RNA sequence: GGGAACGACUCGAGUAGAGUCGAAAAGGAGGCAACACGGUCAUAUGUGCCACACAGGGAAGUGAAGGUGAAGCCACUCUUGAAGGAGGUGACAACAAGGGUACCUAUUGUGGAGCCCCCAUUUUGGUCUACUCCAAUUAUUCGUAAUUGGAGUAGAAAAAGAAACAACAACAACAAC
Reactivity to 2A3 in 0.01 (KOAc 150mM, MgCl2 10mM, bicine 150mM(pH8.5), 24C), signal-to-noise 7, nucleotides 027 to 126: g040g000a010g000g020c010a050a010c010a030c060g050g030u090c040a020u090a040u240g070u060g030c030c000a040c000a000c010a030g110g030g070a130a050g050u060g090a100a020g060g020u050g020a020a000g030c010c000a030c020u060c010u060u140g080a110a020g040g040a060g000g040u040g030a030c020a090a000c020a060a090g080g000g000u040a030c010c000u050a080u090u170g030u040g030g030a040g010c000c000c000c000c030a050u120u080u050u130g070g000
Reactivity to DMS in 0.01 (KOAc 150mM, MgCl2 10mM, bicine 150mM(pH8.5), 24C), signal-to-noise 9, nucleotides 027 to 126: g010g010a070g010g010c040a050a200c050a070c070g010g010u010c120a070u010a090u010g020u000g010c030c030a110c070a070c090a100g000g000g010a090a110g020u010g010a080a070g000g010u000g010a090a180g010c040c030a060c030u000c030u000u000g010a110a120g000g000a060g000g010u000g000a070c050a060a110c100a070a100g000g010g010u000a070c030c030u000a100u010u000g020u010g010g010a300g000c030c010c010c010c030a120u000u000u000u010g010g010